The record gives the reactivity of an RNA of 177 nucleotides to 2A3 and DMS. The RNA was probed in 150 mM KOAc, 10 mM MgCl2 and 150 mM bicine (pH 8.5) at 24 C. For 2A3 the reverse transcriptase was SuperScript II with manganese.
RNA sequence: GGGAACGACUCGAGUAGAGUCGAAAAGAUUUUAUUGUUUGAACCUUAUGGUGCUGAUUCUGCUGUUACAUGGUUCAUGUUUGAGUGGAAUGGGUCAUAUACCGUGUGGUGAUUCUCGAUCGGCUCAGGACGAACAAUGGUUCGCCGUUGUUCGUCCAAAAGAAACAACAACAACAAC
Reactivity to 2A3 in 0.01 (KOAc 150mM, MgCl2 10mM, bicine 150mM(pH8.5), 24C), signal-to-noise 6, nucleotides 027 to 126: g010a040u080u080u060u110a130u060u150g100u080u060u060g020a010a010c000c000u050u100a040u040g010g000u040g000c020u020g010a030u020u000c000u020g000c000u020g090u250u060a020c010a020u030g040g150u070u120c030a000u020g020u010u030u040g040a010g000u030g000g030a040a020u030g020g030g040u090c110a030u140a030u070a230c030c020g040u050g050u050g090g020u010g040a070u070u010c020u010c010g060a080u010c000g030g000c010u000c020a030
Reactivity to DMS in 0.01 (KOAc 150mM, MgCl2 10mM, bicine 150mM(pH8.5), 24C), signal-to-noise 4, nucleotides 027 to 126: g010a090u020u010u010u010a080u010u020g010u000u000u000g020a090a040c020c010u000u020a050u020g010g020u010g000c020u000g000a060u010u000c020u010g000c010u000g020u000u000a040c050a020u010g020g010u030u030c040a030u000g000u000u010u000g000a040g030u000g010g000a050a030u000g000g000g010u000c090a100u020a120u020a080c030c020g030u010g020u010g010g000u010g000a130u010u000c020u000c040g000a080u000c020g000g020c050u010c060a180